[RMDB]
RNA sequence: GGGAACGACUCGAGUAGAGUCGAAAAAGCUCACUGCGAUAAACUUAAAAACCAAAGAACGCUUUUCCGUGCCUUGCCAAUCGGCGUUGCGGAUGUAACUCGCCGAGUUAAUGUACUCAUUAAGGAAUGAUCCAUCGGUAUUCGUACCGAUGGAUCAAAAAGAAACAACAACAACAAC
Reactivity to DMS in 0.01 (KOAc 150mM, MgCl2 10mM, bicine 150mM(pH8.5), 24C), signal-to-noise 1, nucleotides 027 to 126: a130g030c040u000c070a210c040u010g010c150g000a080u000a060a100a200c080u010u010a040a000a050a080a100c150c050a030a090a130g020a090a160c150g000c040u010u000u000u000c030c020g000u020g000c040c060u000u000g010c050c080a110a110u000c040g010g000c070g010u010u000g010c010g000g010a170u000g000u000a050a050c000u010c050g000c020c000g000a040g000u000u000a110a080u000g010u000a030c040u000c070a040u000u000a090a080g010g040a070a130
Reactivity to 2A3 in 0.01 (KOAc 150mM, MgCl2 10mM, bicine 150mM(pH8.5), 24C), signal-to-noise 1, nucleotides 027 to 126: a010g070c050u070c070a110c050u070g000c010g110a070u080a130a040a060c070u190u170a010a000a010a190a010c030c000a000a080a060g070a110a000c070g000c000u040u020u010u000c020c020g040u060g020c010c010u050u110g000c000c000a110a180u080c090g000g000c010g020u060u110g070c020g050g040a010u070g000u060a060a040c000u000c010g000c020c000g000a000g010u000u050a100a050u100g020u000a030c010u020c070a010u100u140a070a030g180g050a160a170

Source: RMDB library OK2TRN, as collected in RNAgym. Chemical mapping of a 177-nucleotide RNA with DMS and 2A3. The RNA was probed in 150 mM KOAc, 10 mM MgCl2 and 150 mM bicine (pH 8.5) at 24 C. Values cover nucleotides 27 to 126. The 2A3 profile rests on 681 reads.